[RMDB]
RNA sequence: GGGAACGACUCGAGUAGAGUCGAAAACACUGCUGGAAAUAAAAUCGUACCUCGUUUGUCAGUAUACGCUUGAUGAGUUCGUGGAUUCGGACGAGUGACCACACAACUAUGCCACGCCACACCAAUCACUAACCAUGCCGGACCCAUCUAUCGACGAACUCCAUUACGUCUUCGGACGUAAUGGAGUAAAAGAAACAACAACAACAAC
Reactivity to 2A3 in 0.01 (KOAc 150mM, MgCl2 10mM, bicine 150mM(pH8.5), 24C), signal-to-noise 2, nucleotides 027 to 156: c100a010c010u010g020c000u000g100g150a070a080a000u240a060a020a000a020u120c110g010u050a140c000c000u050c080g060u060u040u210g130u060c020a010g010u020a060u120a150c110g030c100u090u150g020a060u090g000a120g040u010u070c030g000u090g020g100a100u060u070c090g070g000a010c030g000a010g010u030g050a040c070c000a010c020a010c010a020a130c040u090a070u090g060c030c000a070c110g030c080c000a070c000a000c010c000a020a060u130c020a050c090u020a100a010c040c000a030u130g010c010c050g000g030a030c000c000c010a070u090c020u090a070u110c090g110a020c090g010a040